RNA sequence: GGGAACGACUCGAGUAGAGUCGAAAACGCCCGUCGGCGGCGCGGGCGGCCGGCUGCCCGGUGGUGCAGGCGAGGGCGGCGCACACCGCCAACGCGGCGUAGCAAGCCGUCAAUCGGCGCAGGCUGGCAAUAUGCGACCUUUCGAGGUCGCAUAUUGAAAAGAAACAACAACAACAAC
Reactivity to DMS in 0.01 (KOAc 150mM, MgCl2 10mM, bicine 150mM(pH8.5), 24C), signal-to-noise 2, nucleotides 027 to 126: c080g010c020c000c000g000u000c050g000g000c020g000g000c080g030c110g010g000g010c000g000g010c000c070g020g000c050u000g000c020c020c010g010g010u040g000g000u030g000c060a090g010g000c030g030a240g000g020g010c000g010g000c020g020c070a110c110a180c010c000g000c010c040a060a130c090g000c050g010g000c000g020u020a050g010c080a140a150g020c000c010g000u020c060a140a080u030c040g020g020c070g000c070a090g000g010c000u000g020g010
Reactivity to 2A3 in 0.01 (KOAc 150mM, MgCl2 10mM, bicine 150mM(pH8.5), 24C), signal-to-noise 2, nucleotides 027 to 126: c020g000c000c020c000g000u020c070g030g030c010g000g010c000g000c030g030g010g030c000g000g010c000c000g050g040c070u090g020c000c000c000g060g040u130g050g000u100g010c020a030g070g000c030g070a120g060g030g000c000g000g000c020g040c020a030c020a010c010c000g000c000c020a010a000c030g010c030g040g000c000g010u010a020g020c050a120a020g000c010c000g010u010c010a040a180u090c020g030g000c030g010c040a020g100g000c000u010g010g010
An RNA of 177 nucleotides, treated with DMS and 2A3 and read out base by base.
The reactions ran in a buffer of 150 mM KOAc, 10 mM MgCl2 and 150 mM bicine (pH 8.5), at 24 C.
DMS adducts were read by reverse transcription with MarathonRT.
Values cover nucleotides 27 to 126.